[RMDB]
Annotation
The record gives the reactivity of an RNA of 177 nucleotides to DMS and 2A3. For 2A3 the reverse transcriptase was SuperScript II with manganese. The RNA was probed in 150 mM KOAc, 10 mM MgCl2 and 150 mM bicine (pH 8.5) at 24 C. For DMS, 2,972 sequencing reads were counted.

RNA sequence: GGGAACGACUCGAGUAGAGUCGAAAAGUGGAGCGCAGUGGUUAUUAUUAGCUGAAGAUCUUAUGAAAGAGGUAAUUGUCUCCUUUCGUUCGGAAAGUGGGGGAUUUUACACCACAGAUGGUAGGGAAUUGCUGUCCAGAUUCGUCUGGACAGCAAUAAAAGAAACAACAACAACAAC
Reactivity to DMS in 0.01 (KOAc 150mM, MgCl2 10mM, bicine 150mM(pH8.5), 24C), signal-to-noise 3, nucleotides 027 to 126: g010u000g010g010a100g020c090g030c050a030g020u010g010g010u010u000a060u010u000a110u000u010a130g030c030u000g010a120a100g000a050u000c040u000u010a060u010g010a050a040a070g000a070g010g000u000a080a080u010u010g000u010c020u000c050c010u000u000u010c030g010u010u000c160g020g010a030a050a060g020u000g020g010g000g010g000a040u000u010u010u000a070c070a080c040c030a060c090a070g000a040u000g010g000u000a070g000g000g000a070
Reactivity to 2A3 in 0.01 (KOAc 150mM, MgCl2 10mM, bicine 150mM(pH8.5), 24C), signal-to-noise 1, nucleotides 027 to 126: g040u040g060g010a070g000c020g000c040a010g000u010g100g050u090u000a010u080u000a010u020u130a090g000c010u040g010a000a010g060a100u050c040u100u200a170u100g150a110a040a050g100a020g060g010u030a060a090u130u110g090u020c030u040c010c010u010u040u000c060g040u070u040c020g050g070a110a120a020g020u150g010g040g000g000g050a030u000u040u000u090a030c060a030c030c010a010c020a010g070a050u050g000g080u040a040g040g020g000a090